[RMDB]
RNA sequence: GGGAACGACUCGAGUAGAGUCGAAAAGAAGGAGAUGAAAGCGACUUUAGAAUCGGCUAACUGAGCAGACAGAUACAGACGGCAAGUAUCGUCGCCAGAGAUACAGUCGCAACUAGCCGAAGGAGAAAGCAUUUUACUGCUUCGGCAGUAAAAUGCUAAAAGAAACAACAACAACAAC
Reactivity to 2A3 in 0.01 (KOAc 150mM, MgCl2 10mM, bicine 150mM(pH8.5), 24C), signal-to-noise 2, nucleotides 027 to 126: g100a000a000g040g140a040g050a020u120g230a090a090a000g040c000g000a020c000u150u150u080a100g040a110a070u060c000g030g000c070u040a110a070c000u020g020a020g050c040a090g030a000c020a000g000a010u020a040c000a010g160a130c050g040g120c060a180a090g000u000a000u000c010g000u010c000g000c000c000a000g000a000g000a000u080a130c020a020g020u000c000g000c030a030a000c050u040a030g000c000c000g070a060a000g130g050a030g080a080a030
Reactivity to DMS in 0.01 (KOAc 150mM, MgCl2 10mM, bicine 150mM(pH8.5), 24C), signal-to-noise 2, nucleotides 027 to 126: g020a070a060g000g010a060g000a000u040g030a010a130a150g030c020g000a040c000u000u000u060a020g000a200a120u030c020g000g000c030u010a020a180c040u000g000a080g000c020a070g010a000c020a050g020a060u000a010c020a090g000a250c180g000g000c050a120a130g000u010a020u000c000g000u000c030g000c000c000a050g010a100g000a120u080a050c170a040g010u000c000g040c000a110a030c090u020a040g000c000c000g030a100a120g010g000a040g020a030a080
This 177-nucleotide RNA was probed chemically with 2A3 and DMS. Source: RMDB library OK1LIB, as collected in RNAgym. For 2A3, 1,078 sequencing reads were counted.